[RMDB]
RNA sequence: GGGAACGACUCGAGUAGAGUCGAAAAUUGCUAAUAAUCAUGAGUUUGAAGUUACAACUCAACAUGGUGUUACUUUGAAUGUUGUCAGUAGGCGUUUAGAAGGUGCAGUUUUAAUUUUACAAACUGCGCCCGUCUUGAUAUUCGUAUCAAGACGGGCAAAAGAAACAACAACAACAAC
Reactivity to DMS in 0.01 (KOAc 150mM, MgCl2 10mM, bicine 150mM(pH8.5), 24C), signal-to-noise 2, nucleotides 027 to 126: u030u000g050c060u020a130a100u000a110a110u000c040a050u000g000a120g000u000u000u030g030a110a040g000u000u000a100c100a030a040c040u000c050a070a130c140a050u010g000g020u010g000u000u010a050c020u000u000u000g000a040a030u010g000u000u000g000u000c110a030g010u020a080g020g000c060g000u010u010u000a050g020a120a160g010g020u000g030c000a000g020u000u000u000u050a080a130u010u020u000u010a100c200a020a010a050c020u000g000c110